[RMDB]
RNA sequence: GGGAACGACUCGAGUAGAGUCGAAAACCUGUGAGUGGAUCCUCGCCUUUAUUCACUGGGGACGACAACUCUGGGGAGAAAAGGGAGGAUCGGAUGGGAAGAGUAUAUCCUACGGGAAUCCCCCGGUGUAGAGUUGUCUUCGGACAACUCAAAAGAAACAACAACAACAAC
Reactivity to 2A3 in 0.01 (KOAc 150mM, MgCl2 10mM, bicine 150mM(pH8.5), 24C), signal-to-noise 8, nucleotides 027 to 129: c000c010u000g030u070g080a160g030u150g010g040a000u020c000c010u020c030g300c020c010u100u040u010a100u070u050c090a100c290u030g000g000g010g030a130c140g060a060c060a200a090c010u020c010u030g010g000g000g010a040g030a010a050a010a000g000g000g000a000g010g020a010u020c000g000g000a050u060g030g000g020a030a100g050a060g090u080a030u020a040u180c010c010u040a030c040g030g000g020a020a080u100c040c030c000c000c020g020g010u080g050u100a020
Reactivity to DMS in 0.01 (KOAc 150mM, MgCl2 10mM, bicine 150mM(pH8.5), 24C), signal-to-noise 5, nucleotides 027 to 129: c020c020u030g000u020g010a000g050u040g000g090a040u010c000c000u020c000g050c030c020u000u000u000a140u000u000c040a070c050u020g000g000g000g000a170c200g040a070c300a140a080c020u000c010u040g000g000g000g000a060g020a040a070a040a030g010g010g060a000g000g000a020u010c030g010g010a060u040g000g000g000a070a040g010a080g000u040a080u020a000u020c030c020u020a080c050g010g010g040a040a040u040c030c000c010c030c010g030g010u000g030u000a060

This 170-nucleotide RNA was probed chemically with 2A3 and DMS. The 2A3 profile rests on 13,065 reads. Conditions: 150 mM KOAc, 10 mM MgCl2 and 150 mM bicine (pH 8.5), 24 C.